This 177-nucleotide RNA was probed chemically with 2A3 and DMS. As a SHAPE reagent, 2A3 marks flexible, mostly unpaired nucleotides at the ribose 2'-OH. Conditions: 150 mM KOAc, 10 mM MgCl2 and 150 mM bicine (pH 8.5), 24 C. 2A3 adducts were read by reverse transcription with SuperScript II with manganese.
RNA sequence: GGGAACGACUCGAGUAGAGUCGAAAAACGGAAAGACCCUAUAGACCUUAACUGUAAGCUGUCAUUGUUUCUUCGGUUUUAAUGCUCAGAGUAAGUGGGAGACGCUGAAGACGCCCUUUAGGGGGCGUCAAGUCACUGUCUUCGGACAGUGACUUGAAAAAGAAACAACAACAACAAC
Reactivity to 2A3 in 0.01 (KOAc 150mM, MgCl2 10mM, bicine 150mM(pH8.5), 24C), signal-to-noise 7, nucleotides 027 to 126: a000c020g010g060a070a070a030g110a070c010c000c030u030a040u050a080g090a070c010c000u060u100a060a060c040u090g040u080a080a000g040c020u040g040u050c030a080u060u060g030u020u050u020c020u040u040c000g060g030u010u010u020u130a080a070u170g010c010u010c040a020g020a030g180u100a250a040g040u080g070g060g010a060g020a020c040g000c040u000g030a030a000g030a010c000g000c000c030c000u030u050u160a190g000g000g000g010g000c000g000
Reactivity to DMS in 0.01 (KOAc 150mM, MgCl2 10mM, bicine 150mM(pH8.5), 24C), signal-to-noise 8, nucleotides 027 to 126: a090c090g000g010a070a060a070g000a120c070c020c020u010a110u010a070g000a060c030c020u000u010a060a080c060u000g010u010a050a090g010c040u000g000u010c040a190u010u010g000u000u010u000c030u000u010c060g000g010u000u010u010u010a040a080u020g000c040u010c030a050g000a100g010u020a050a060g020u010g000g000g000a100g010a090c120g010c050u010g000a070a110g010a020c000g000c000c000c000u000u010u030a100g010g000g000g000g000c000g010